[RMDB]
RNA sequence: GGGAACGACUCGAGUAGAGUCGAAAAAGAGUGACUCUGUCGGCCUGGGAGCGUCUCCGACCCAGUGUCCGGCAUCGUUGAGGAGACUUGCCGGUCAGAUCAGGCCACAGGAUCUGACUGGGACAUGCUCUGUGGCUGGGCCUGUCGGCGACUUGUCGCGUAUUCACAGGUUCGCCUGUGAAUACGCAAAAGAAACAACAACAACAAC
Reactivity to 2A3 in 0.01 (KOAc 150mM, MgCl2 10mM, bicine 150mM(pH8.5), 24C), signal-to-noise 5, nucleotides 027 to 156: a000g180a010g070u160g040a030c010u020c010u060g010u010c000g000g010c000c000u000g010g010g000a040g030c150g000u010c000u000c000c010g010a010c000c000c000a000g000u000g060u090c010c000g000g000c000a030u060c070g080u080u180g100a040g030g000a010g000a010c000u010u300g000c000c000g010g000u000c000a000g000a010u000c010a000g030g030c000c000a010c000a000g010g000a000u000c000u000g000a000c000u000g000g000g000a030c050a090u140g030c040u070c050u100g000u000g000g000c000u010g040g010g000c010c020u190g100u300c200g020g010c010g020a030c020u020u120g130u160c100